[RMDB]
The record gives the reactivity of an RNA of 207 nucleotides to 2A3.
RNA sequence: GGGAACGACUCGAGUAGAGUCGAAAACCCGCCCCGCCCCGAGCAGACUUCUGAACGAGAGCGAGAAGCGGCCCUUCGUGGAGGAGGCGGAGCGGCUGCGCGUGCAGCACAAGAAGGACCACCCGGAUUACAAGUACCAGCCGCGGCGGAGGAAGUCACUAAGCUCAAGGUUCGCCUUGAGCUUAGUAAAAGAAACAACAACAACAAC
Reactivity to 2A3 in 0.01 (KOAc 150mM, MgCl2 10mM, bicine 150mM(pH8.5), 24C), signal-to-noise 1, nucleotides 027 to 156: c000c000c010g010c000c000c050c000g010c000c020c020c020g030a040g030c060a020g010a060c040u060u010c020u150g070a140a070c150g050a100g000a060g170c020g060a080g020a200a020g060c000g010g010c020c030c000u040u040c020g000u060g030g060a120g070g020a060g010g070c000g000g000a020g010c170g000g030c010u010g010c080g020c040g090u120g020c050a060g040c020a030c010a030a030g080a010a030g020g050a030c060c030a080c040c030c070g010g010a060u070u110a090c010a080a000g060u040a160c010c000a040g050c030c010g040c000g010g000c000g000g000a040g050g000a050a000g030u030c000
The data come from the RNA Mapping Database (RMDB), library OK3TST. Reactivities are given for positions 27 through 156. The reactions ran in a buffer of 150 mM KOAc, 10 mM MgCl2 and 150 mM bicine (pH 8.5), at 24 C.